Description:
This 207-nucleotide RNA was probed chemically with 2A3 and DMS. It was measured as part of the RMDB library ARCHII. For DMS the reverse transcriptase was MarathonRT. For 2A3, 1,673 sequencing reads were counted. The DMS profile rests on 1,834 reads. The RNA was probed in 150 mM KOAc, 10 mM MgCl2 and 150 mM bicine (pH 8.5) at 24 C. 2A3 adducts were read by reverse transcription with SuperScript II with manganese. Reactivities are given for positions 27 through 156.
[RMDB]
RNA sequence: GGGAACGACUCGAGUAGAGUCGAAAAAUGAGUGAUUCGGCAGAUUUGGAUUCAUAUAUAUAUCCACCCAUGUGGUACUUCAUUCUACGAUAUAUAUAAGAUCCAUCUGUAUAGAUAUCAUCAUCUACAUCCAGAAAGAAGUAUGCUUUGGAAGAAGCCACUAAAGUGUGUUCGCACACUUUAGUGGAAAAGAAACAACAACAACAAC
Reactivity to 2A3 in 0.01 (KOAc 150mM, MgCl2 10mM, bicine 150mM(pH8.5), 24C), signal-to-noise 3, nucleotides 027 to 156: a000u060g000a010g080u050g010a020u020u030c010g040g000c010a010g020a040u090u190u230g050g020a040u160u110c120a010u030a010u000a000u000a000u000a000u080c030c020a050c010c020c020a090u240g110u270g020g010u090a080c050u090u220c070a120u150u080c030u050a040c050g000a000u000a000u000a000u000a000u000a040a030g020a020u000c000c000a000u000c000u000g020u030a070u080a110g000a010u100a010u060c010a000u010c010a010u030c010u070a080c020a050u030c020c010a030g140a040a120a000g070a070a020g050u080a030u150g030c020u080u100u040g010g020a070a050g020a060a020g060
Reactivity to DMS in 0.01 (KOAc 150mM, MgCl2 10mM, bicine 150mM(pH8.5), 24C), signal-to-noise 1, nucleotides 027 to 156: a040u010g000a100g010u000g010a000u000u020c040g050g040c000a030g010a090u010u030u010g060g000a080u000u000c010a150u000a030u000a040u010a010u020a040u000c000c060a120c010c020c090a130u030g000u000g060g020u010a120c110u020u000c060a160u000u010c100u000a090c150g000a040u000a030u000a010u010a010u000a040a120g000a040u000c010c010a050u000c000u040g010u000a000u010a130g000a050u010a040u000c020a000u000c010a050u000c030u000a110c040a070u000c020c020a100g000a080a090a170g010a130a080g010u000a080u010g010c010u000u010u000g020g000a070a130g000a200a200g000